Chemical mapping of a 177-nucleotide RNA with DMS and 2A3. It was measured as part of the RMDB library OK2TRN. Reactivities are given for positions 27 through 126.
RNA sequence: GGGAACGACUCGAGUAGAGUCGAAAAGAAGACACCGGUCGUGUCUGGAACAUCAGCCUGCUCGACAAGAACACCGUGCCCGAUCAGGACAAGGUGGAUCAGUCGUAUGCGGUGCCCGCUGGCGACCGCCGAUUUACCAGUUCGCUGGUAAAUCGGCAAAAGAAACAACAACAACAAC
Reactivity to DMS in 0.01 (KOAc 150mM, MgCl2 10mM, bicine 150mM(pH8.5), 24C), signal-to-noise 3, nucleotides 027 to 126: g000a170a030g020a020c010a020c030c080g010g010u010c060g040u000g010u000c000u020g000g000a130a080c130a050u000c050a130g020c030c050u000g000c090u000c030g020a020c070a060a150g020a070a170c000a010c020c010g020u000g010c000c000c000g000a150u020c300a120g000g010a010c020a010a030g010g020u000g000g010a120u000c040a190g010u000c000g000u010a040u010g040c010g020g000u010g000c040c020c040g000c120u010g000g000c040g000a030c050c040
Reactivity to 2A3 in 0.01 (KOAc 150mM, MgCl2 10mM, bicine 150mM(pH8.5), 24C), signal-to-noise 2, nucleotides 027 to 126: g090a020a010g060a000c030a000c040c120g030g060u070c020g000u000g020u050c040u020g050g070a090a040c020a100u070c020a030g040c010c020u080g040c050u040c010g010a020c000a070a100g020a090a010c010a010c010c010g050u030g020c000c030c000g070a300u250c150a140g030g010a010c010a010a050g010g000u040g010g040a210u040c020a010g000u010c000g010u040a080u180g020c000g030g030u050g000c010c000c010g000c080u080g090g020c020g000a020c020c010